[RMDB]
RNA sequence: GGGAACGACUCGAGUAGAGUCGAAAAUGCCCAGUUCCAGAGCUUGAUUUAGUGACUCAAAGAAUGGACUAUUUGGGGCCGAUGGUCAAUAAGGCAGCAAGGGUCCAGGGCGUCGCUGACGGUGGUCGGAGUAUGGUAGGUUCGCCUACCAUACUCCAAAAGAAACAACAACAACAAC
Reactivity to DMS in 0.01 (KOAc 150mM, MgCl2 10mM, bicine 150mM(pH8.5), 24C), signal-to-noise 2, nucleotides 027 to 126: u020g020c000c000c020a250g020u000u000c020c020a150g020a160g010c030u000u000g050a080u010u020u000a070g020u010g010a030c020u000c070a120a110a100g010a150a110u010g000g000a050c020u000a060u010u000u000g000g020g000g010c000c000g000a140u000g010g000u020c150a050a040u040a090a150g010g000c010a040g020c020a030a040g000g000g000u000c020c020a060g010g000g010c150g020u000c020g040c020u000g010a060c070g000g010u010g000g000u000c070
Reactivity to 2A3 in 0.01 (KOAc 150mM, MgCl2 10mM, bicine 150mM(pH8.5), 24C), signal-to-noise 1, nucleotides 027 to 126: u160g010c060c000c000a000g070u070u040c000c000a010g030a050g080c060u090u150g050a130u170u070u130a070g030u010g070a060c000u020c100a000a020a120g060a100a130u080g000g030a010c010u140a300u120u040u050g290g030g020g000c000c020g030a070u100g080g000u070c030a020a150u130a080a070g000g000c010a020g000c010a020a000g090g020g000u000c020c000a000g010g050g000c070g000u020c010g000c010u000g030a050c010g000g030u110g000g020u060c070